[RMDB]
RNA sequence: GGGAACGACUCGAGUAGAGUCGAAAACUGCGGGUUCGCCCGCAGAAAAAAGCGUACUACAUGUGGGUAUGGGAGAAGUCCAUCCCAAAUAGGAUGGAAUCUUCUUUGAUCAUACCGUAACAUCAUGUAUCGCAAAAAAGAGAGUUUCGACUCUCAAGUUAAGGUUCAAGUUCGCUUGAACCUUAACAAAAGAAACAACAACAACAAC
Reactivity to 2A3 in 0.01 (KOAc 150mM, MgCl2 10mM, bicine 150mM(pH8.5), 24C), signal-to-noise 4, nucleotides 027 to 156: c010u010g010c040g000g020g020u040u090c210g150c010c020c060g010c040a020g030a030a040a000a000a000a000g040c070g020u090a060c050u010a010c020a010u010g000u040g060g000g030u010a000u000g000g030g010a010g000a010a000g010u000c000c000a000u010c000c020c010a110a240a150u280a050g000g000a000u000g020g090a110a140u040c010u020u000c000u090u060u040g110a110u110c000a000u010a010c000c020g020u030a040a040c020a110u180c000a000u050g020u010a030u300c100g000c020a000a010a000a000a120a020g050a000g000a000g000u100u160u110c080g080a040c010u000c000u010c020a010a000
Reactivity to DMS in 0.01 (KOAc 150mM, MgCl2 10mM, bicine 150mM(pH8.5), 24C), signal-to-noise 2, nucleotides 027 to 156: c020u010g000c000g030g030g020u000u000c300g040c020c000c010g000c060a020g000a000a060a050a110a090a150g000c000g030u000a080c100u010a090c020a020u010g040u000g030g010g010u000a010u000g000g000g000a100g020a020a010g010u020c010c000a010u000c000c000c010a040a050a090u000a050g010g000a030u000g000g000a090a110u000c020u000u000c000u000u010u000g010a220u000c020a030u000a020c000c000g070u000a060a090c060a050u000c010a040u000g000u000a030u000c020g010c010a000a070a070a080a070a120g000a020g010a040g020u000u010u010c110g000a080c010u010c000u000c020a020a120

This 207-nucleotide RNA was probed chemically with 2A3 and DMS.
For DMS, 5,313 sequencing reads were counted.
For 2A3, 4,336 sequencing reads were counted.
It was measured as part of the RMDB library RNAMAK.